[RMDB]
RNA sequence: GGGAACGACUCGAGUAGAGUCGAAAAUAACACACUAAACGAUACACAGCAUGUCGGGUCUAUUGUACCAGCGGCAACAUUAUUACCGAACAAUGGUUCAGUAAGAUUUGUAAUGACUGGUAAUACAGUACUACCGUCACUUCGGUGACGGUAGUACAAAAGAAACAACAACAACAAC
Reactivity to 2A3 in 0.01 (KOAc 150mM, MgCl2 10mM, bicine 150mM(pH8.5), 24C), signal-to-noise 2, nucleotides 027 to 126: u040a010a000c010a000c010a030c050u090a000a090a030c100g040a010u090a070c120a010c040a090g090c010a060u040g000u080c050g030g040g000u000c030u070a070u010u190g010u020a000c010c000a000g000c000g050g010c020a030a060c040a040u120u170a130u140u040a030c010c000g010a050a000c070a050a300u260g200g000u000u000c010a000g010u000a080a000g050a080u040u000u070g020u010a160a120u090g140a180c010u060g010g000u000a010a000u160a070c030a000
Reactivity to DMS in 0.01 (KOAc 150mM, MgCl2 10mM, bicine 150mM(pH8.5), 24C), signal-to-noise 1, nucleotides 027 to 126: u010a090a100c060a080c230a060c120u040a080a080a160c090g000a080u000a090c050a120c090a060g010c050a070u000g010u000c040g020g000g010u010c070u030a020u060u010g010u020a020c000c010a000g000c050g040g020c040a070a030c090a000u000u000a080u000u000a040c000c040g010a010a060c040a270a130u010g010g000u000u000c000a040g010u000a000a040g000a050u000u000u000g010u000a070a100u010g030a130c000u000g000g000u000a010a120u000a040c100a090